[RMDB]
RNA sequence: GGGAACGACUCGAGUAGAGUCGAAAAGAUAUGGACACAUCGAACGGGAGAAGCGAAUAUUCUCCUAUAUUCGGAAACGAAUAUAGGAGAAUAUUCCUUCAUCGAUCGUUCGAGUGUGUCCUAAGUCCAACGGGACAGAGUUCGCUCUGUCCCGUUGAAAAGAAACAACAACAACAAC
Reactivity to DMS in 0.01 (KOAc 150mM, MgCl2 10mM, bicine 150mM(pH8.5), 24C), signal-to-noise 1, nucleotides 027 to 126: g000a050u000a300u010g000g000a030c010a010c000a060u000c030g000a020a000c000g000g020g010a050g000a030a000g010c300g010a030a010u000a000u000u000c000u000c000c000u000a000u000a000u000u000c000g000g000a120a060a240c000g000a010a010u000a000u000a000g030g000a010g000a000a000u000a000u000u000c000c000u000u000c010a170u000c260g010a060u030c010g000u000u020c010g020a030g050u010g010u000g000u010c000c000u010a000a090g010u000c040